Chemical mapping of a 177-nucleotide RNA with 2A3 and DMS. 2A3 adducts were read by reverse transcription with SuperScript II with manganese. For DMS the reverse transcriptase was MarathonRT. Conditions: 150 mM KOAc, 10 mM MgCl2 and 150 mM bicine (pH 8.5), 24 C. Reactivities are given for positions 27 through 126.
RNA sequence: GGGAACGACUCGAGUAGAGUCGAAAACGUGGCAGUCCACCACCUGAUUCACCGUCGGAUCCGCAGAACCGCGUUCCAGGCGACGGCGCAGCAUCGAGGUCUCGUCUCGCUCGGAGAGGUAGCGCAGUAAUCAGCCUGAGUUCGCUCAGGCUGAUUAAAAAGAAACAACAACAACAAC
Reactivity to 2A3 in 0.01 (KOAc 150mM, MgCl2 10mM, bicine 150mM(pH8.5), 24C), signal-to-noise 1, nucleotides 027 to 126: c020g050u060g030g010c020a050g060u000c020c000a040c010c020a070c020c030u030g050a130u040u050c050a040c100c020g080u060c040g010g000a040u040c010c010g020c020a020g000a180a030c040c060g020c040g130u120u010c010c010a040g020g050c010g000a020c120g000g000c010g040c070a030g000c030a070u150c120g100a090g060g070u030c020u010c000g050u050c010u020c050g000c000u060c040g000g000a080g010a020g090g000u030a020g010c000g050c040a000g040
Reactivity to DMS in 0.01 (KOAc 150mM, MgCl2 10mM, bicine 150mM(pH8.5), 24C), signal-to-noise 2, nucleotides 027 to 126: c190g000u000g000g010c080a060g000u010c030c020a160c020c030a080c020c060u010g000a100u000u000c050a060c040c030g010u010c020g020g010a070u020c100c030g040c050a090g010a140a070c060c040g030c090g040u000u000c020c030a060g000g010c010g010a060c220g000g010c040g000c140a010g020c040a130u010c190g020a130g020g000u000c020u000c040g000u010c010u000c030g010c010u000c080g000g000a060g000a040g020g000u000a100g000c010g010c040a070g000